[RMDB]
RNA sequence: GGGAACGACUCGAGUAGAGUCGAAAAUCGGAAGUCUUCCCGAAGACGCCGGGGACAUCUCGGAAUGAGAAAGGAGACAGGUGGAAGAAAAAGGGGUGGGCCCCCCGAUCCGAGGGGCCCGACGCCCAAACCCCAUGGUUCGCCAUGGGGAAAAGAAACAACAACAACAAC
Reactivity to 2A3 in 0.01 (KOAc 150mM, MgCl2 10mM, bicine 150mM(pH8.5), 24C), signal-to-noise 6, nucleotides 027 to 129: u110c030g000g020a050a020g050u020c020u040u040c030c000c020g020a050a020g060a010c080g000c030c020g000g000g000g000a050c020a120u020c030u020c030g020g040a050a040u130g020a030g040a070a040a000g030g010a020g010a010c030a020g000g060u090g020g050a070a030g050a080a080a030a050a030g020g000g000g000u070g010g010g010c010c000c000c000c000c020g040a060u040c060c050g000a030g000g010g000g000c000c000c000g010a020c020g010c000c000c000a020a070a100
Reactivity to DMS in 0.01 (KOAc 150mM, MgCl2 10mM, bicine 150mM(pH8.5), 24C), signal-to-noise 6, nucleotides 027 to 129: u030c070g000g000a040a070g030u030c050u020u020c010c010c000g000a100a060g030a050c120g000c030c080g020g010g020g020a010c110a070u000c030u020c010g010g070a050a050u060g060a070g030a090a130a080g000g000a030g000a030c120a050g000g000u000g000g000a130a050g000a050a060a050a130a080g030g020g020g030u040g040g010g010c000c000c000c000c000c000g020a100u040c110c050g000a080g000g000g000g000c000c000c000g030a030c090g000c000c000c000a040a110a110